[RMDB]
This 177-nucleotide RNA was probed chemically with DMS. It was measured as part of the RMDB library OK2TRN.

RNA sequence: GGGAACGACUCGAGUAGAGUCGAAAAGAGGAGCAUGGUCAAGAGGCUUGCAAGGGAGGCUGAGAAGCUCGGAGUAACCCUCGAGGAGUAUAUACUCGACCUUCUCUCCAGCGACACCGACCCGCCCACGCAUGCCAGUUUUCGAACUGGCAUGCGUAAAAGAAACAACAACAACAAC
Reactivity to DMS in 0.01 (KOAc 150mM, MgCl2 10mM, bicine 150mM(pH8.5), 24C), signal-to-noise 1, nucleotides 027 to 126: g040a100g000g030a070g000c110a010u000g010g010u000c020a110a060g000a150g030g000c060u060u030g030c060a050a250g020g010g040a030g000g020c040u000g010a100g000a070a060g010c030u000c040g050g030a100g010u000a080a100c200c050c060u020c050g010a140g040g000a100g010u000a070u010a130u010a090c030u000c000g050a070c120c030u000u000c040u010c000u030c060c020a000g000c050g010a120c110a140c060c040g000a090c030c030c110g000c030c040c060